Chemical mapping of a 207-nucleotide RNA with 2A3 and DMS. The 2A3 profile rests on 3,089 reads.
RNA sequence: GGGAACGACUCGAGUAGAGUCGAAAAAUGCUUCACCUCCGCAGAGGCUAAACGCUGAAUGCAGAAAAUCGCCGGUGGCCUUCGCCAUCGGUGACAGGGAUUGCUGUAAGGUUUUGUGCGCCAUGUGUCCCCACUUGGCGCCGGAUAAUCGUGUCAGCUAACUAUACAAGUUCGCUUGUAUAGUUAGAAAAGAAACAACAACAACAAC
Reactivity to 2A3 in 0.01 (KOAc 150mM, MgCl2 10mM, bicine 150mM(pH8.5), 24C), signal-to-noise 5, nucleotides 027 to 156: a000u080g010c010u040u040c050a120c080c020u010c030c060g040c030a000g020a010g050g000c020u090a130a120a020c100g000c030u040g100a300a020u080g020c010a010g060a060a090a020a040u030c020g000c010c000g000g000u010g010g000c020c100u260u230c200g000c000c000a000u000c000g000g020u000g010a010c000a010g020g030g020a070u060u120g010c030u040g050u130a090a090g050g060u040u050u190u200g090u090g000c000g000c000c000a000u020g030u010g060u090c020c000c010c000a030c000u000u000g000g000c000g000c000c010g010g010a070u110a180a090u200c090g030u070g070u120c020a010g000
Reactivity to DMS in 0.01 (KOAc 150mM, MgCl2 10mM, bicine 150mM(pH8.5), 24C), signal-to-noise 3, nucleotides 027 to 156: a090u000g030c050u000u010c070a120c030c010u000c030c090g040c050a100g020a280g010g030c010u000a070a090a090c120g000c030u000g020a100a230u000g020c000a080g010a080a060a120a090u000c010g020c000c000g040g050u010g000g030c000c150u000u000c090g020c000c010a010u000c010g000g030u000g000a020c030a080g020g010g020a130u010u000g020c000u000g030u020a060a130g000g000u000u000u000u020g020u000g030c030g010c000c000a030u000g010u000g020u000c050c030c090c040a300c040u000u010g010g020c000g020c000c030g020g000a060u000a040a050u000c080g000u000g010u000c040a190g000
The DMS profile rests on 7,326 reads. For 2A3 the reverse transcriptase was SuperScript II with manganese. DMS adducts were read by reverse transcription with MarathonRT. The reactions ran in a buffer of 150 mM KOAc, 10 mM MgCl2 and 150 mM bicine (pH 8.5), at 24 C.